This 177-nucleotide RNA was probed chemically with 2A3 and DMS.
The RNA was probed in 150 mM KOAc, 10 mM MgCl2 and 150 mM bicine (pH 8.5) at 24 C.
RNA sequence: GGGAACGACUCGAGUAGAGUCGAAAAAUUUAAAGGAAGUGAAAGCCCCAUUGCACGUGCUAAAUUGAUGCCAUUCGUGUUGCAGUUCAUCUCGUUAAUUCCACGAUUGAUCUGUGUCAAAGUAAUGUCUAGAACAGAGGUUCGCCUCUGUUCUAGAAAAAGAAACAACAACAACAAC
Reactivity to 2A3 in 0.01 (KOAc 150mM, MgCl2 10mM, bicine 150mM(pH8.5), 24C), signal-to-noise 3, nucleotides 027 to 126: a000u070u040u060a060a030a020g040g060a060a120g010u080g130a070a080a040g040c000c000c000c000a040u070u140g000c000a010c030g000u030g000c080u120a110a200a130u130u200g040a070u060g030c100c010a040u050u030c020g020u020g010u060u090g000c030a000g000u000u030c010a060u050c040u010c010g020u000u160a130a070u230u090c050c040a030c050g020a020u050u040g000a010u010c000u030g050u020g050u110c030a040a040a090g020u030a020a240u140g040
Reactivity to DMS in 0.01 (KOAc 150mM, MgCl2 10mM, bicine 150mM(pH8.5), 24C), signal-to-noise 4, nucleotides 027 to 126: a110u010u000u010a040a060a140g010g020a080a080g020u020g000a060a080a150g010c040c020c000c040a090u010u010g000c020a030c040g000u010g010c060u010a020a070a090u020u000g020a120u020g000c010c090a080u020u000c060g020u000g010u020u020g020c020a060g000u010u000c050a030u020c100u000c030g000u000u010a060a120u010u010c110c080a050c070g010a060u010u000g000a030u010c040u000g020u010g000u020c080a040a050a080g010u020a060a050u020g000